Structure probing data (DMS and 2A3) for a 207-nucleotide construct. DMS adducts were read by reverse transcription with MarathonRT. The data come from the RNA Mapping Database (RMDB), library PDB130.
RNA sequence: GGGAACGACUCGAGUAGAGUCGAAAAGUUAUGAGAAGUGAUGUGUGUGCGAGUGCAAAGGGGUCGCAUGUGAUUGGAGGGCAAGUCGGGUGCCAGCAGCCGCGGUAAUACCUGCUCCAAUAGUGUCUAUGGUGGAUGCUGCAGUUAAAAUGUCCGUAUCUGGAAUAUAGUUCGCUAUAUUCCAGAUAAAAGAAACAACAACAACAAC
Reactivity to DMS in 0.01 (KOAc 150mM, MgCl2 10mM, bicine 150mM(pH8.5), 24C), signal-to-noise 3, nucleotides 027 to 156: g000u000u000a070u000g010a120g000a110a080g010u000g010a070u000g030u000g040u020g010u000g020c060g010a110g030u000g010c050a050a070a100g000g000g030g040u000c080g020c020a050u000g030u000g010a140u000u000g020g020a150g000g020g030c020a060a070g020u010c050g020g010g050u010g020c040c020a050g020c030a130g010c040c060g020c090g030g010u000a040a070u000a060c030c010u000g010c030u000c050c050a060a110u000a070g010u000g020u000c040u000a070u010g040g030u000g000g020a140u010g020c020u000g000c040a100g030u000u010a020a040a060a100u010g000u000c020c020g000u000
Reactivity to 2A3 in 0.01 (KOAc 150mM, MgCl2 10mM, bicine 150mM(pH8.5), 24C), signal-to-noise 8, nucleotides 027 to 156: g050u070u070a080u150g040a020g020a120a060g030u040g060a060u030g040u020g010u010g010u030g050c050g020a050g020u070g030c050a040a070a060g010g000g010g000u040c030g010c050a050u070g030u040g070a090u030u050g020g020a040g020g010g020c040a040a020g040u050c030g010g000g020u050g040c030c030a020g010c020a010g050c040c060g030c040g010g010u040a050a030u040a120c010c010u030g030c020u030c020c010a050a050u060a080g060u050g020u020c030u050a070u090g070g010u040g020g010a020u030g010c020u020g000c010a000g000u030u070a050a110a070a080u100g030u020c020c020g010u020
As a SHAPE reagent, 2A3 marks flexible, mostly unpaired nucleotides at the ribose 2'-OH. 2A3 adducts were read by reverse transcription with SuperScript II with manganese. Reactivities are rounded to 0.1 and cut off at 0 and 3.